Structure probing data (DMS and 2A3) for a 207-nucleotide construct. For 2A3, 1,072 sequencing reads were counted. Reactivities are given for positions 27 through 156. 2A3 adducts were read by reverse transcription with SuperScript II with manganese. The data come from the RNA Mapping Database (RMDB), library ARCHII. The RNA was probed in 150 mM KOAc, 10 mM MgCl2 and 150 mM bicine (pH 8.5) at 24 C.

RNA sequence: GGGAACGACUCGAGUAGAGUCGAAAAUGGCAGACUAUAAUGCUACUAGGCGUUUCAAUAAACGGAACAAAAAAACAAGAAAAUGACUAUCAAGAUUUAAUGAUUAGUCAAAAUCUAAACCAAAAUCUAGCUUUUGCUAGCGUUUAGCAGCUAGUUGCAUCCAUCCUAUGUUCGCAUAGGAUGGAUGAAAAGAAACAACAACAACAAC
Reactivity to DMS in 0.01 (KOAc 150mM, MgCl2 10mM, bicine 150mM(pH8.5), 24C), signal-to-noise 1, nucleotides 027 to 156: u010g030g010c020a050g020a080c040u030a080u020a080a120u000g000c020u000a020c040u000a050g000g000c020g040u000u010u010c000a190a050u010a040a090a050c090g000g010a080a160c070a020a000a040a160a070a040a080c080a040a100g010a040a020a120a170u000g020a020c050u020a040u000c010a050a250g010a210u000u000u000a160a140u020g000a020u000u000a000g030u000c010a050a030a070a160u000c060u000a050a100a090c050c000a000a060a090a090u000c080u000a060g080c020u010u010u000u010g030c040u000a040g020c050g010u010u000u000a000g040c010a020g030c030u000a060g020u000u010g000
Reactivity to 2A3 in 0.01 (KOAc 150mM, MgCl2 10mM, bicine 150mM(pH8.5), 24C), signal-to-noise 3, nucleotides 027 to 156: u080g070g040c030a010g020a070c040u050a050u080a300a130u070g000c010u020a070c010u030a010g050g080c040g000u000u080u090c090a120a150u120a180a030a050c070g040g000a050a060c100a080a040a040a010a000a030a020c110a070a020g030a020a050a030a040u010g000a010c000u050a000u020c000a020a070g080a300u070u300u300a210a080u080g000a030u040u110a000g000u000c010a000a030a000a000u040c020u060a070a030a060c030c020a000a060a030a130u050c000u010a020g000c010u070u130u140u250g000c020u010a000g030c000g090u060u080u070a020g020c020a000g000c000u010a010g020u050u050g000